[RMDB]
RNA sequence: GGGAACGACUCGAGUAGAGUCGAAAAUAAUGCCACUUCGGUGGCAUUAGCAGGUACGAAAGCCCUAUCAAGUACAAAAUCCCAAACAACAAGAUAGGGAAAUAAUGCAUAGCUUCGGCUAUGCAAAAUACCCGUUCACAUUCGUGUGAACGGGUAUAAAAGAAACAACAACAACAAC
Reactivity to DMS in 0.01 (KOAc 150mM, MgCl2 10mM, bicine 150mM(pH8.5), 24C), signal-to-noise 1, nucleotides 027 to 126: u000a010a000u000g000c000c000a000c000u000u000c180g010g000u010g000g000c000a000u010u000a000g000c300a090g090g010u000a030c000g040a090a070a170g010c020c000c000u000a010u000c000a090a080g000u000a000c010a020a010a070a080u000c000c000c000a040a080a100c160a030a020c060a130a200g000a000u000a000g000g000g000a070a080a020u000a050a150u000g000c020a000u000a020g000c000u000u010c240g000g030c000u000a000u000g010c000a000a000a080

Conditions: 150 mM KOAc, 10 mM MgCl2 and 150 mM bicine (pH 8.5), 24 C. An RNA of 177 nucleotides, treated with DMS and read out base by base. For DMS, 762 sequencing reads were counted. DMS adducts were read by reverse transcription with MarathonRT. Values cover nucleotides 27 to 126.